[RMDB]
RNA sequence: GGGAACGACUCGAGUAGAGUCGAAAAAUUGUAUUUCACGUUGUUAUGAACAAUCGUGAUAUUGAUUGAGUGAGUGACAACACCGUCACCAGCCUGAUUGAAGGUGGCUUGCAUUUUCUCCUGUAUCAGGUAAAAACAGCUUCGGCUGUUUUUACCUAAAAGAAACAACAACAACAAC
Reactivity to DMS in 0.01 (KOAc 150mM, MgCl2 10mM, bicine 150mM(pH8.5), 24C), signal-to-noise 1, nucleotides 027 to 126: a020u000u000g000u000a030u010u000u000c000a010c010g000u000u000g000u010u000a130u000g010a090a030c010a000a000u000c030g030u000g040a010u000a060u000u000g010a030u000u000g000a080g020u000g010a100g030u010g010a250c030a040a060c130a060c060c090g010u000c020a110c090c040a120g000c010c050u010g000a100u000u000g000a020a080g000g010u000g000g020c190u000u010g000c060a050u000u000u000u000c070u020c020c060u010g000u000a050u010c100
Chemical mapping of a 177-nucleotide RNA with DMS. The DMS profile rests on 1,137 reads. It was measured as part of the RMDB library OK2TST. For DMS the reverse transcriptase was MarathonRT.